[RMDB]
RNA sequence: GGGAACGACUCGAGUAGAGUCGAAAACUGAUCGCACCGAUAAACAUACGAGGUUCAAACUUUUUACUAUCAAUAUUUUCAUUUUUUAAGACGUCUUUAAUAACAGAUUUUUGGUCUGUAGGAUCAAGAUAAACCUUACAUUCGUGUAAGGUUUAUCAAAAGAAACAACAACAACAAC
Reactivity to 2A3 in 0.01 (KOAc 150mM, MgCl2 10mM, bicine 150mM(pH8.5), 24C), signal-to-noise 3, nucleotides 027 to 126: c010u020g040a080u070c030g000c060a010c050c000g030a060u040a070a190a020c040a040u220a100c050g050a010g020g030u070u080c070a120a160a080c040u160u120u070u140u150a040c050u070a060u110c010a070a080u060a130u140u100u160u090c010a070u040u100u060u140u130u060a030a090g040a030c000g070u010c040u070u090u100a160a080u130a110a010c000a010g030a070u080u140u040u200u220g140g000u020c010u020g040u010a040g070g060a050u050c040a050a000
Reactivity to DMS in 0.01 (KOAc 150mM, MgCl2 10mM, bicine 150mM(pH8.5), 24C), signal-to-noise 3, nucleotides 027 to 126: c030u010g010a060u000c070g020c040a050c050c030g020a070u000a090a080a120c080a090u000a070c090g010a060g010g000u000u000c090a070a110a180c020u010u010u000u000u020a100c030u010a070u010c000a070a110u010a050u010u000u000u010c010a030u020u030u040u000u000u010a050a180g010a100c070g000u000c020u010u000u020a050a080u000a080a050c050a040g010a050u000u000u010u000u010g010g020u000c010u000g000u010a060g020g000a070u010c110a040a110
Chemical mapping of a 177-nucleotide RNA with 2A3 and DMS. Values cover nucleotides 27 to 126.